[RMDB]
RNA sequence: GGGAACGACUCGAGUAGAGUCGAAAAAUCUCCAUGUCUAGGACGUACCGUACCUAGUCAUGCGUCAGAGAGCGUACACUCUCAGUCUCUCGAGAUCUAGUCAGACUGUACAUGGUACAUCAUGCCACGUUCUUGGGAUUUUCGAAUCCCAAGAACGAAAAGAAACAACAACAACAAC
Reactivity to DMS in 0.01 (KOAc 150mM, MgCl2 10mM, bicine 150mM(pH8.5), 24C), signal-to-noise 3, nucleotides 027 to 126: a120u000c010u000c000c000a000u000g000u000c010u000a030g010g010a130c030g010u020a080c200c070g000u000a130c010c020u000a010g000u000c000a010u000g000c150g020u020c130a050g000a050g010a040g010c060g030u010a060c130a090c040u000c040u000c020a090g000u000c020u010c010u000c050g010a110g010a100u010c110u010a060g000u000c080a050g010a060c070u000g020u000a050c040a060u010g010g010u000a070c060a100u000c110a110u010g010c020c070a100
Reactivity to 2A3 in 0.01 (KOAc 150mM, MgCl2 10mM, bicine 150mM(pH8.5), 24C), signal-to-noise 2, nucleotides 027 to 126: a000u010c010u010c000c000a000u010g000u000c000u000a010g000g000a000c030g060u130a150c080c130g050u280a300c010c030u010a000g000u000c010a010u010g020c010g080u050c060a050g000a010g000a010g060c040g010u050a040c060a020c080u020c000u010c010a030g090u000c010u000c000u020c060g080a060g020a130u020c030u060a040g120u050c030a020g010a120c070u030g050u040a030c020a110u120g030g000u050a050c010a060u060c030a050u170g060c020c020a050
An RNA of 177 nucleotides, treated with DMS and 2A3 and read out base by base. Values cover nucleotides 27 to 126. The data come from the RNA Mapping Database (RMDB), library OK2TST. 2A3 adducts were read by reverse transcription with SuperScript II with manganese.